[RMDB]
RNA sequence: GGGAACGACUCGAGUAGAGUCGAAAACGCGUCAGAUUCGUCUGACGCGAAAGCAUAGAACAGGGCUAUCAUGUAUUAUAGUUCUAUGCAACUAUAGCGCUAAAACGAUACCGUUCGCGGUAUCGAAGACAUUUAACAGCUUCGGCUGUUAAAUGUCAAAAGAAACAACAACAACAAC
Reactivity to DMS in 0.01 (KOAc 150mM, MgCl2 10mM, bicine 150mM(pH8.5), 24C), signal-to-noise 2, nucleotides 027 to 126: c020g020c010g000u000c000a020g000a050u000u020c260g000u010c000u000g000a010c000g020c000g050a000a030a110g000c050a030u000a020g000a000a050c020a060g020g010g000c060u000a140u000c190a070u000g000u000a060u000u000a110u010a080g010u000u000c000u000a010u000g000c010a110a060c050u030a070u000a140g000c160g020c190u010a020a080a140a150c020g000a000u000a020c000c000g030u000u010c110g030c010g020g000u010a000u010c000g020a060a070
Reactivity to 2A3 in 0.01 (KOAc 150mM, MgCl2 10mM, bicine 150mM(pH8.5), 24C), signal-to-noise 3, nucleotides 027 to 126: c000g020c010g020u010c000a000g010a040u020u070c110g040u000c070u000g000a000c000g020c020g000a000a000a000g000c000a000u000a000g000a010a000c020a040g120g060g030c030u080a090u300c110a110u280g140u140a160u190u130a170u160a050g000u000u000c000u000a010u020g000c000a000a000c010u030a020u110a160g100c070g020c180u110a030a050a000a050c010g000a000u000a000c020c010g020u010u040c190g000c000g100g020u000a000u000c000g000a000a010
Conditions: 150 mM KOAc, 10 mM MgCl2 and 150 mM bicine (pH 8.5), 24 C. An RNA of 177 nucleotides, treated with DMS and 2A3 and read out base by base. For DMS, 1,350 sequencing reads were counted. The data come from the RNA Mapping Database (RMDB), library M2PK50.